[RMDB]
An RNA of 177 nucleotides, treated with 2A3 and DMS and read out base by base.
For DMS, 119,374 sequencing reads were counted.
The data come from the RNA Mapping Database (RMDB), library OK1LIB.
For 2A3 the reverse transcriptase was SuperScript II with manganese.
The reactions ran in a buffer of 150 mM KOAc, 10 mM MgCl2 and 150 mM bicine (pH 8.5), at 24 C.
RNA sequence: GGGAACGACUCGAGUAGAGUCGAAAAUUGCGUCAUGAGUAAGGCCGUGAUUGGCAUCAGAGAUCGUUACGAUAUCAUGUGUUAUCGUGAGGCGCUAUCUGUGAGUAACGGAACUGACAGCAGGGCCGUCGAUAUCGACGUUCGCGUUGGUAUUGACAAAAGAAACAACAACAACAAC
Reactivity to 2A3 in 0.01 (KOAc 150mM, MgCl2 10mM, bicine 150mM(pH8.5), 24C), signal-to-noise 9, nucleotides 027 to 126: u070u060g010c020g010u010c010a040u120g030a020g120u110a080a060g080g000c000c010g020u010g050a150u060u150g070g010c020a040u050c010a010g030a000g010a070u120c010g020u030u080a010c010g000a010u010a010u070c150a190u270g300u160g040u140u020a020u020c020g010u030g050a160g080g020c010g000c030u020a030u020c010u000g060u010g040a020g020u030a040a010c010g010g020a030a040c010u010g010a010c010a020g000c000a010g010g020g030c020c020
Reactivity to DMS in 0.01 (KOAc 150mM, MgCl2 10mM, bicine 150mM(pH8.5), 24C), signal-to-noise 9, nucleotides 027 to 126: u030u010g010c050g010u000c010a050u020g010a130g010u020a100a090g000g010c020c010g000u000g010a110u030u030g010g020c050a110u020c020a020g000a050g000a060u010c020g010u010u010a020c010g000a040u010a040u010c030a160u030g020u040g010u000u000a010u000c020g000u010g000a090g000g010c040g000c080u010a060u010c030u000g000u000g010a080g000u010a110a000c050g000g010a080a110c050u000g000a040c070a100g010c090a040g010g000g010c050c040